The record gives the reactivity of an RNA of 207 nucleotides to DMS and 2A3.
RNA sequence: GGGAACGACUCGAGUAGAGUCGAAAACUCAUGUUAGGUGAAAGUUGAUGGUCGCCGUGUCAGUCCAUGCCUUUGAAAACAGUUCUAUGUAGUAGGGAGUCGAGAACCUAUGAGAGUUAGAACUUGCUAUGCCUUGGACUCUUCGGAGUCCAAGGAACAACUAUGAUGGCUUCGGCCAUCAUAGUUGAAAAGAAACAACAACAACAAC
Reactivity to DMS in 0.01 (KOAc 150mM, MgCl2 10mM, bicine 150mM(pH8.5), 24C), signal-to-noise 3, nucleotides 027 to 156: c040u010c030a070u010g020u010u000a070g020g030u010g010a080a070a110g010u000u010g030a120u010g030g020u010c030g030c000c040g020u010g010u000c020a070g010u000c060c050a100u000g000c010c020u000u010u010g000a090a050a070a060c040a050g000u000u000c020u010a030u000g000u000a300g010u000a020g010g010g020a110g010u000c170g010a270g000a090a110c010c000u010a020u010g000a280g010a160g020u010u010a030g000a020a030c030u000u000g030c020u000a120u000g000c000c000u000u000g010g000a020c000u000c000u000u000c300g040g000a050g010u000c000c000a000a000g000g000a020a030
Reactivity to 2A3 in 0.01 (KOAc 150mM, MgCl2 10mM, bicine 150mM(pH8.5), 24C), signal-to-noise 2, nucleotides 027 to 156: c040u050c030a030u090g060u130u110a100g110g000u070g070a150a070a090g030u110u100g040a060u080g050g000u040c030g000c030c020g000u000g030u070c030a020g050u010c020c040a060u070g070c030c010u170u070u110g110a120a120a040a040c060a000g030u050u010c000u010a010u070g030u040a060g010u000a010g000g050g050a040g030u070c060g030a030g010a250a040c000c000u000a020u040g060a100g010a010g050u060u010a000g010a010a010c000u040u040g000c000u040a060u150g010c000c000u000u000g000g000a010c000u000c020u040u070c130g090g000a010g000u000c000c000a000a000g000g000a000a000
The reactions ran in a buffer of 150 mM KOAc, 10 mM MgCl2 and 150 mM bicine (pH 8.5), at 24 C. For DMS the reverse transcriptase was MarathonRT. Values are in units of 0.01, from 0 to 300, in steps of 10.